RNA sequence: GGGAACGACUCGAGUAGAGUCGAAAAUCACGCAGCUUCGGCUGCGUGAAAAUAAAAACAACUCGAGCAAGGCCGCCGAGUUGAAGGACCAAAAUAAAUAAUAAAGUCUGGUGUUCGCACCAGACAACAUUACAUGAUUGUUCGCAAUCAUGUAAUGAAAAGAAACAACAACAACAAC
Reactivity to DMS in 0.01 (KOAc 150mM, MgCl2 10mM, bicine 150mM(pH8.5), 24C), signal-to-noise 4, nucleotides 027 to 126: u000c000a000c000g010c000a010g010c010u000u010c200g050g020c000u000g010c010g020u000g000a000a010a100a070u000a040a050a080a110a080c010a020a010c000u000c000g010a100g040c020a120a130g000g030c260c150g000c010c000g000a020g000u000u000g000a060a050g010g000a180c010c020a060a040a110a080u020a040a080a070u010a090a090u010a090a060a130g010u000c000u010g000g010u000g010u000u010c180g010c010a010c000c000a000g010a000c000a020a070
Reactivity to 2A3 in 0.01 (KOAc 150mM, MgCl2 10mM, bicine 150mM(pH8.5), 24C), signal-to-noise 4, nucleotides 027 to 126: u010c000a000c000g030c010a010g010c010u090u110c210g130g000c040u000g000c000g000u000g000a000a000a000a000u000a000a020a000a000a000c000a000a000c010u000c010g080a110g070c020a110a110g300g060c100c090g000c000c000g020a000g000u000u000g010a010a010g060g000a020c010c020a040a040a020a100u220a050a040a030u230a070a050u090a130a140a030g000u000c000u020g000g050u010g030u060u090c210g010c060a000c000c000a000g000a000c000a000a000

Record summary: Structure probing data (DMS and 2A3) for a 177-nucleotide construct. The 2A3 profile rests on 5,657 reads. The RNA was probed in 150 mM KOAc, 10 mM MgCl2 and 150 mM bicine (pH 8.5) at 24 C.